[RMDB]
RNA sequence: GGGAACGACUCGAGUAGAGUCGAAAAAAAAGAAGAUUCAAAAGAAGAACAAAUCAAAAAGAGCUUUGCGAAAACGUUAGAUAUGUAUCCAAUUAAGAAUCUCGAGGAUUUAUACGACAAAGAAGGAUCUGUCAAAAGGAUUCGUCCUUUUGACAGAAAAAGAAACAACAACAACAAC
Reactivity to 2A3 in 0.01 (KOAc 150mM, MgCl2 10mM, bicine 150mM(pH8.5), 24C), signal-to-noise 2, nucleotides 027 to 126: a000a000a000a000g080a000a000g030a020u070u020c080a010a020a020a020g080a060a000g050a040a000c060a070a060a010u150c090a020a040a300a180a000g080a020g000c010u010u110u150g030c010g130a070a020a000a000c060g000u000u060a040g020a060u020a010u230g040u100a160u050c000c000a090a030u120u140a040a120g000a020a020u000c010u000c030g010a060g030g000a000u000u090u000a090u110a080c040g010a010c040a020a150a000g090a010a010g080g000a060
Reactivity to DMS in 0.01 (KOAc 150mM, MgCl2 10mM, bicine 150mM(pH8.5), 24C), signal-to-noise 2, nucleotides 027 to 126: a050a000a070a070g000a040a000g000a010u000u000c000a010a160a030a040g000a250a070g000a040a020c040a070a110a020u000c030a080a160a030a080a080g010a200g000c080u070u010u000g000c120g010a120a100a030a040c120g010u010u010a050g020a040u000a010u000g020u030a110u000c000c000a030a090u000u000a010a160g000a010a000u010c010u010c080g000a110g000g010a040u000u000u000a050u010a010c150g000a010c090a090a020a040g000a060a140g000g000a190